Description: Structure probing data (2A3 and DMS) for a 177-nucleotide construct. For DMS the reverse transcriptase was MarathonRT. 2A3 adducts were read by reverse transcription with SuperScript II with manganese. The reactions ran in a buffer of 150 mM KOAc, 10 mM MgCl2 and 150 mM bicine (pH 8.5), at 24 C. For DMS, 1,550 sequencing reads were counted.

RNA sequence: GGGAACGACUCGAGUAGAGUCGAAAAGGGCACUGUGGGAACGGAAAGAGGAGAUCUCAGAGUUCGCAGUUCGGAGGUCGGAGCAGGAGUAGGGGCUUAUACAAUCAUCGUCUGCUGGCAUUGAUGAGACGUCAGGUAGGUUCGCCUACCUGACGUCAAAAGAAACAACAACAACAAC
Reactivity to 2A3 in 0.01 (KOAc 150mM, MgCl2 10mM, bicine 150mM(pH8.5), 24C), signal-to-noise 2, nucleotides 027 to 126: g070g000g010c000a020c050u060g080u050g070g050g000a000a010c010g000g090a130a030a010g010a000g000g060a100g030a050u040c000u030c010a010g000a010g020u060u070c010g000c020a030g000u040u030c090g000g000a020g000g020u090c040g020g010a060g010c040a000g020g020a000g040u030a060g000g040g000g000c020u020u090a120u030a060c050a030a070u030c050a020u030c030g000u050c010u060g010c010u000g030g000c050a050u040u130g060a030u010g020a000
Reactivity to DMS in 0.01 (KOAc 150mM, MgCl2 10mM, bicine 150mM(pH8.5), 24C), signal-to-noise 2, nucleotides 027 to 126: g030g040g000c120a140c120u000g040u030g000g000g060a010a020c170g020g000a050a060a180g000a090g000g010a130g030a180u000c000u010c040a030g030a160g060u020u000c190g000c000a110g000u000u000c000g000g000a020g030g000u000c070g050g000a130g020c100a000g000g000a040g030u000a060g040g000g000g030c030u010u000a070u010a120c080a190a130u000c000a060u000c120g030u010c000u040g020c130u000g000g000c000a170u000u010g000a030u020g010a130